[RMDB]
RNA sequence: GGGAACGACUCGAGUAGAGUCGAAAAGUUCCGUGUUCGCACGGAACAAAAAGGGGUCCCACUGAUGGAACUACUCAGCGUACUGAAGCCUCCACGGUACGUAGUGAGCCUACCAGUGGGACGGAGGCACCCAAAAAGCGUGCAUUCGUGCACGCAAGAAGGGUCUACGAUUCGUCGUAGACCCUUCAAAAGAAACAACAACAACAAC
Reactivity to 2A3 in 0.01 (KOAc 150mM, MgCl2 10mM, bicine 150mM(pH8.5), 24C), signal-to-noise 1, nucleotides 027 to 156: g020u000u020c000c010g000u000g020u000u080c250g040c080a010c020g010g020a000a000c030a000a000a000a050a040g100g000g000g000u000c000c010c010a000c000u000g020a020u020g000g100a200a200c070u180a130c000u290c000a000g010c010g010u000a000c000u000g060a050a000g010c000c000u000c000c000a000c010g010g020u000a000c010g000u000a110g300u060g070a040g090c020c000u030a070c020c010a000g000u000g000g010g000a000c000g000g000a000g000g000c010a030c000c010c040a060a070a060a000a000g020c000g010u000g010c000a010u010u140c190g090u050g000c000a000c010g000c000a000a020